An RNA of 177 nucleotides, treated with DMS and 2A3 and read out base by base. Source: RMDB library TTRINS, as collected in RNAgym. 2A3 adducts were read by reverse transcription with SuperScript II with manganese. The RNA was probed in 150 mM KOAc, 10 mM MgCl2 and 150 mM bicine (pH 8.5) at 24 C.
RNA sequence: GGGAACGACUCGAGUAGAGUCGAAAAGAUAUGGAACCCAUGGAGCGAGAGCGGUGGGUCGAUGAAACAUCUCGGAAACGAGAUGUGGAGACCCACCGCACUCGCGAUGAAGUGGGUUCCUAAGUCAGAGAUAGAAUUAGUUCGCUAAUUCUAUCUCAAAAGAAACAACAACAACAAC
Reactivity to DMS in 0.01 (KOAc 150mM, MgCl2 10mM, bicine 150mM(pH8.5), 24C), signal-to-noise 6, nucleotides 027 to 126: g010a060u010a300u000g010g000a010a000c000c000c010a010u000g010g000a060g020c000g020a010g010a040g050c000g010g030u010g000g020g010u000c000g000a090u010g000a230a150a030c000a000u000c000u000c000g010g000a150a130a190c010g010a010g010a020u000g000u000g000g000a060g000a010c000c010c000a000c000c000g020c000a000c000u000c000g020c000g000a040u010g000a140a200g010u000g010g000g010u000u000c000c000u000a000a090g010u000c060a170
Reactivity to 2A3 in 0.01 (KOAc 150mM, MgCl2 10mM, bicine 150mM(pH8.5), 24C), signal-to-noise 2, nucleotides 027 to 126: g010a030u090a080u210g000g000a000a000c010c000c010a000u030g000g010a000g010c010g000a000g000a000g000c010g000g000u010g040g010g020u020c040g300a300u050g000a010a010a000c000a010u010c000u000c000g030g060a110a080a050c010g000a000g000a010u000g000u000g010g000a010g010a000c000c000c000a000c000c020g010c000a000c000u000c000g000c000g000a010u010g010a000a000g010u000g010g000g000u000u000c000c000u000a020a010g020u010c040a030